[RMDB]
RNA sequence: GGGAACGACUCGAGUAGAGUCGAAAAUGACUCGGCCACCUCGAAGUCCGGGCACCGGGCCAGCAGUUCGGUCAGCGCCACCCGGCAUUGCAUCCGGGCCGCGGCCGCACCCAGGCAGUGGUGGGCGCUUUGGCGCAGUAUUCGUACUGCGCCAAAGAAAAGAAACAACAACAACAAC
Reactivity to DMS in 0.01 (KOAc 150mM, MgCl2 10mM, bicine 150mM(pH8.5), 24C), signal-to-noise 4, nucleotides 027 to 126: u020g010a140c060u000c020g000g000c020c020a070c150c000u000c060g020a100a180g030u000c000c040g010g010g030c060a040c170c090g020g010g020c000c020a110g040c050a080g010u000u000c010g010g010u000c020a040g020c050g030c020c090a150c200c180c270g010g020c100a070u000u000g010c190a080u010c010c000g010g010g020c030c030g040c000g010g010c010c000g020c120a060c000c010c010a160g000g010c050a090g010u000g010g030u000g000g000g010c030g000
Reactivity to 2A3 in 0.01 (KOAc 150mM, MgCl2 10mM, bicine 150mM(pH8.5), 24C), signal-to-noise 2, nucleotides 027 to 126: u110g060a040c010u000c020g090g000c030c000a020c010c010u030c020g140a240a030g020u010c010c030g000g030g000c070a110c170c070g090g050g030c030c030a070g000c010a020g020u010u000c000g000g010u040c060a040g010c000g010c000c010a080c070c050c020g000g010c040a060u040u180g020c020a040u070c010c000g000g010g010c010c000g020c010g000g000c000c000g050c000a030c000c030c010a010g060g000c010a020g030u040g040g000u040g010g010g030c020g020